[RMDB]
RNA sequence: GGGAACGACUCGAGUAGAGUCGAAAACGGGAAUUCGUUCCCGGUCAGCCGUAGGACCGAUAAGUAUAGAAGUCCAACAGCGCUCUUCGAAAGAGGAGCGACAUGGACGGUAUAUACUUUUGACGGUCCUAAACGGAACUUAGCGCUUCGGCGCUAAUCGAAGAGCGUAUUUCGAUACGCUCUUCGAAAAAGAAACAACAACAACAAC
Reactivity to 2A3 in 0.01 (KOAc 150mM, MgCl2 10mM, bicine 150mM(pH8.5), 24C), signal-to-noise 2, nucleotides 027 to 156: c000g020g020g040a040a070u080u110c170g100u100u010c020c010c010g010g030u090c050a070g030c000c020g000u010a030g000g000a000c010c010g000a080u030a070a010g010u010a020u000a010g090a080a000g020u030c000c020a020a040c120a080g000c000g000c010u000c000u000u000c000g070a140a060a060g000a000g010g000a000g010c000g020a020c030a070u020g000g000a000c000g000g000u000a010u000a000u000a010c000u030u030u030u100g140a060c030g010g000u020c000c000u070a020a000a000c010g020g040a000a050c050u060u050a040g000c000g000c010u060u040c240g080g000c000g000c020u030a020a090
Reactivity to DMS in 0.01 (KOAc 150mM, MgCl2 10mM, bicine 150mM(pH8.5), 24C), signal-to-noise 1, nucleotides 027 to 156: c020g000g000g000a050a090u000u020c180g020u000u010c000c000c010g020g000u000c020a120g020c030c010g020u000a070g010g000a010c000c000g030a110u000a000a050g050u000a040u000a030g000a300a270g040u000c000c020a010a180c080a190g000c020g040c000u000c000u010u010c000g030a160a160a270g000a040g040g010a040g020c000g000a020c120a300u000g010g000a020c010g000g050u000a130u000a020u000a000c030u000u010u010u000g030a080c130g060g020u020c000c010u000a000a020a120c020g000g020a060a060c140u000u000a150g000c000g050c010u000u010c300g070g040c010g000c000u000a000a050
Chemical mapping of a 207-nucleotide RNA with 2A3 and DMS. For 2A3 the reverse transcriptase was SuperScript II with manganese. The reactions ran in a buffer of 150 mM KOAc, 10 mM MgCl2 and 150 mM bicine (pH 8.5), at 24 C. Values are in units of 0.01, from 0 to 300, in steps of 10. For 2A3, 1,969 sequencing reads were counted.